[RMDB]
RNA sequence: GGGAACGACUCGAGUAGAGUCGAAAACAGAUCGAAGGUCUUCUGAAGAGAUACCUGGAUGUUGAAGAGAUCUUCAAGGACGGGCCGAACGAUGCCGUGAUCUCCAGUCUAAUCAGGGAGAACAAGACCUGAGUAAGGAGUUCGCUCCUUACUCAGGAAAAGAAACAACAACAACAAC
Reactivity to 2A3 in 0.01 (KOAc 150mM, MgCl2 10mM, bicine 150mM(pH8.5), 24C), signal-to-noise 2, nucleotides 027 to 126: c000a040g130a060u050c020g040a030a030g010g010u000c010u080u000c020u040g070a120a030g020a000g000a060u060a150c000c050u070g040g060a110u120g130u220u150g100a050a010g040a010g000a050u010c000u040u040c020a000a020g050g000a010c050g000g000g070c020c000g030a060a040c020g020a020u110g150c040c030g050u050g020a040u010c010u000c010c010a020g030u010c070u150a110a040u080c030a080g160g000g000a030g060a050a030c040a060a010g080a060
Reactivity to DMS in 0.01 (KOAc 150mM, MgCl2 10mM, bicine 150mM(pH8.5), 24C), signal-to-noise 3, nucleotides 027 to 126: c070a150g010a050u000c020g000a110a210g000g010u000c030u000u010c010u000g010a230a130g010a060g000a060u010a100c040c020u000g020g000a120u000g000u010u020g020a090a070g000a090g000a080u010c010u010u000c040a040a210g000g010a040c240g020g010g000c050c030g010a110a110c070g010a050u000g040c030c050g010u010g000a070u000c030u000c020c020a090g010u010c120u020a070a080u020c110a130g010g020g010a080g000a040a110c110a070a080g000a150

Conditions: 150 mM KOAc, 10 mM MgCl2 and 150 mM bicine (pH 8.5), 24 C. The record gives the reactivity of an RNA of 177 nucleotides to 2A3 and DMS. The DMS profile rests on 1,973 reads. Source: RMDB library OK2TST, as collected in RNAgym. In probing experiments dimethyl sulfate is read out at A N1 and C N3, which are open when not base-paired.